RNA sequence: GGGAACGACUCGAGUAGAGUCGAAAAACUGUGUGCCAACACCAAUCAUGUUAUUGCUAACAUUACUCAGUGCUCCUGAGAGUAGUAUAAAAGGCCGCGUCUCUUUUCUGUCUUGAUAGAGAACUCAAAUGAUAGUGAGGUUCGCCUCACUAUCAUUAAAAGAAACAACAACAACAAC
Reactivity to 2A3 in 0.01 (KOAc 150mM, MgCl2 10mM, bicine 150mM(pH8.5), 24C), signal-to-noise 2, nucleotides 027 to 126: a000c100u050g010u000g040u100g080c000c040a060a030c000a040c010c040a030a070u140c080a050u110g060u080u090a190u110u200g020c040u040a070a090c030a100u080u140a050c020u000c040a020g020u010g090c030u060c130c020u040g000a020g010a020g060u050a020g020u030a050u080a220a120a010a000g040g020c030c020g070c040g080u010c010u020c000u090u120u120u010c030u050g220u050c050u100u060g030a030u030a070g050a010g050a120a040c020u000c100a040
Reactivity to DMS in 0.01 (KOAc 150mM, MgCl2 10mM, bicine 150mM(pH8.5), 24C), signal-to-noise 4, nucleotides 027 to 126: a070c120u000g020u000g010u000g030c030c040a120a070c050a050c050c120a080a080u000c190a090u000g000u000u000a060u000u010g010c080u000a050a040c060a040u000u000a100c040u000c020a040g010u000g000c210u010c080c010u000g000a080g010a100g020u000a030g010u000a060u010a070a100a120a120g020g010c010c040g020c090g000u010c020u000c010u020u010u000u000c040u000g010u010c100u010u000g000a050u010a070g000a080g000a060a100c120u000c060a090
Source: RMDB library OK2TRN, as collected in RNAgym. The record gives the reactivity of an RNA of 177 nucleotides to 2A3 and DMS. The reactions ran in a buffer of 150 mM KOAc, 10 mM MgCl2 and 150 mM bicine (pH 8.5), at 24 C. The DMS profile rests on 2,991 reads.